Chemical mapping of a 177-nucleotide RNA with DMS. For DMS, 3,356 sequencing reads were counted. The data come from the RNA Mapping Database (RMDB), library TTRINS.
[RMDB]
RNA sequence: GGGAACGACUCGAGUAGAGUCGAAAAGAUAUGGAGCAAGGGAUAAAUGCAACAGCUUCAUUUAUGCCUACAAUCGGAAACGAUUGUAGGCAUAAAUGAAGACAUGCAUGUCCUUGCUCCUAAGUCACUUAGAAGGUUUGUUCGCAAACCUUCUAAGAAAAGAAACAACAACAACAAC
Reactivity to DMS in 0.01 (KOAc 150mM, MgCl2 10mM, bicine 150mM(pH8.5), 24C), signal-to-noise 3, nucleotides 027 to 126: g000a050u000a300u010g000g020a020g020c000a010a010g020g010g030a140u020a060a140a030u010g000c020a030a100c300a180g010c010u000u000c000a000u000u000u000a000u010g000c000c010u000a010c000a000a000u010c000g000g010a180a120a250c000g030a020u000u000g010u000a000g000g010c000a000u000a000a000a000u000g000a000a010g000a020c150a150u000g020c000a020u000g000u000c000c000u000u010g000c000u000c000c000u000a000a060g010u000c040a240